[RMDB]
Chemical mapping of a 177-nucleotide RNA with DMS and 2A3. 2A3 adducts were read by reverse transcription with SuperScript II with manganese. For 2A3, 7,826 sequencing reads were counted. It was measured as part of the RMDB library 15KREP.
RNA sequence: GGGAACGACUCGAGUAGAGUCGAAAAUUCCAUUGACCCACUGCUCGAGGACGUCCUCCCUGUCUCCUCGGUUCUUCUUCGAUCCGGACCGGCUCAUCUCGGCAAAAGGCGGCAGUCCUCAGUGCUCGUAUAAAUUAUAGUUCGCUAUAAUUUAUACAAAAGAAACAACAACAACAAC
Reactivity to DMS in 0.01 (KOAc 150mM, MgCl2 10mM, bicine 150mM(pH8.5), 24C), signal-to-noise 6, nucleotides 027 to 126: u010u010c140c160a160u000u000g000a040c010c020c100a080c040u000g000c020u000c020g010a020g010g010a150c060g010u000c040c050u010c010c020c010u010g010u000c040u000c020c030u010c050g020g010u000u000c030u000u010c070u000u010c100g000a080u010c050c020g000g010a110c060c040g010g010c030u000c080a080u000c060u010c040g020g010c060a050a070a100a100g020g010c070g010g020c060a060g000u000c030c010u000c060a070g010u000g010c050u000c110
Reactivity to 2A3 in 0.01 (KOAc 150mM, MgCl2 10mM, bicine 150mM(pH8.5), 24C), signal-to-noise 4, nucleotides 027 to 126: u130u030c030c000a020u010u080g020a020c040c030c040a070c060u020g000c000u010c010g010a010g000g080a130c000g020u010c000c000u030c000c000c010u020g040u020c040u010c020c010u020c040g040g000u040u000c020u090u010c020u070u090c040g060a060u000c040c000g040g020a070c000c010g020g010c010u010c010a090u010c020u020c030g010g010c020a060a080a030a020g030g010c000g010g000c010a020g040u040c010c000u040c020a050g050u040g070c030u050c100